RNA sequence: GGGAACGACUCGAGUAGAGUCGAAAAAGCCAGUAAGGCCUUAAGCGCAGCAAACUCCCGCCCUGAAAACUGCACCCCAUCUUUUUCAUGAUUUUCAAAAGAGGCGGUAGCGCACGGCGCAACUGCAGGUCCAAAAUUUAUUCGUAAAUUUUGGACCAAAAGAAACAACAACAACAAC
Reactivity to 2A3 in 0.01 (KOAc 150mM, MgCl2 10mM, bicine 150mM(pH8.5), 24C), signal-to-noise 3, nucleotides 027 to 126: a000g020c030c030a020g100u120a070a170g030g020c010c000u060u070a090a070g010c010g010c040a040g000c030a060a030a130c030u060c010c010c010g010c000c010c000u040g030a050a040a000a020c010u060g000c020a060c000c020c000c000a060u050c090u030u100u020u040u030c060a080u100g150a150u060u070u060u070c050a070a050a060a010g080a080g040g020c010g000g010u000a010g000c000g000c010a030c090g110g000c030g000c040a020a020c010u010g000c000a040
Reactivity to DMS in 0.01 (KOAc 150mM, MgCl2 10mM, bicine 150mM(pH8.5), 24C), signal-to-noise 3, nucleotides 027 to 126: a120g000c050c030a110g000u020a110a160g010g020c030c040u020u020a140a090g020c080g020c020a090g000c110a050a150a200c090u020c070c020c000g000c030c010c030u000g000a050a020a120a030c030u000g000c070a030c020c010c000c020a080u030c000u000u010u000u030u000c110a050u010g030a140u000u000u020u010c020a050a000a060a090g000a120g010g030c020g000g000u000a010g030c030g000c040a080c120g010g030c010g020c030a040a010c040u000g040c050a100